An RNA of 207 nucleotides, treated with 2A3 and DMS and read out base by base.
For DMS the reverse transcriptase was MarathonRT.
The reactions ran in a buffer of 150 mM KOAc, 10 mM MgCl2 and 150 mM bicine (pH 8.5), at 24 C.
[RMDB]
RNA sequence: GGGAACGACUCGAGUAGAGUCGAAAAGGCUGUGAGCUGGGCAAAUGAGGCACCCGGUUGCAAGUUCCAUGAAAGGCUCGGGGAAAUAUCCUGCUUCACUUCCAUAUGGAGCUAGUGCUUUGUAAAGUGCACUGACAAUAACAAAGUGUAGAGGAGAGUAUAUCGACUGAUUCGUCAGUCGAUAUACAAAAGAAACAACAACAACAAC
Reactivity to 2A3 in 0.01 (KOAc 150mM, MgCl2 10mM, bicine 150mM(pH8.5), 24C), signal-to-noise 5, nucleotides 027 to 156: g030g010c030u010g020u030g080a050g000c020u020g010g030g010c050a070a110a130u130g030a060g010g020c050a040c020c030c010g020g000u140u050g010c020a040a020g010u050u050c020c020a050u130g090a090a130a030g050g000c040u040c070g000g000g000g030a050a150a020u110a040u070c010c030u040g080c010u060u060c030a030c020u080u060c050c010a070u080a090u220g050g010a040g020c010u010a020g020u010g030c010u080u080u090g120u200a090a130a080g080u080g030c020a010c050u020g030a030c030a070a080u120a130a020c050a080a060a030g010u060g030u080a020g020a020g090g010a080g000a000
Reactivity to DMS in 0.01 (KOAc 150mM, MgCl2 10mM, bicine 150mM(pH8.5), 24C), signal-to-noise 2, nucleotides 027 to 156: g030g020c060u010g020u020g000a150g020c050u000g030g010g030c020a060a090a150u020g050a140g020g040c030a130c020c010c010g030g010u000u000g020c010a100a120g010u000u030c030c020a160u020g010a150a100a100g010g040c060u000c050g040g040g010g020a060a110a130u010a100u000c020c010u000g000c010u000u000c030a040c020u000u010c040c080a100u020a130u000g040g010a160g040c010u010a040g000u000g010c020u000u000u000g020u010a130a090a210g030u010g010c010a030c000u000g000a030c010a040a080u000a050a150c030a060a040a060g000u000g020u010a040g000a100g020g020a130g000a230